[RMDB]
This 177-nucleotide RNA was probed chemically with 2A3. The reactions ran in a buffer of 150 mM KOAc, 10 mM MgCl2 and 150 mM bicine (pH 8.5), at 24 C.
RNA sequence: GGGAACGACUCGAGUAGAGUCGAAAAUGAUUAUCAAUCUGCUUUGGGCUGUCGAAAACUGAUUGAUUAUGAAGGCAUAUUUGCCGGAGGUUCAACAGGCUCGAUUAUUGCAGCGAUUGAGCAGUUGCUGGGGUUUCAGGUUCGCCUGAAACCCCAGAAAAGAAACAACAACAACAAC
Reactivity to 2A3 in 0.01 (KOAc 150mM, MgCl2 10mM, bicine 150mM(pH8.5), 24C), signal-to-noise 2, nucleotides 027 to 126: u140g000a030u000u220a040u300c060a060a000u050c000u070g000c030u300u090u000g000g080g000c000u000g000u000c000g100a120a100a100a000c000u000g050a300u010u000g000a000u060u180a120u300g000a110a000g000g000c000a030u030a240u120u210u170g000c000c000g000g000a010g000g000u000u010c000a000a010c000a000g000g040c050u100c080g000a090u170u060a300u120u180g010c000a000g000c000g300a300u030u080g000a000g000c010a000g000u050u090g000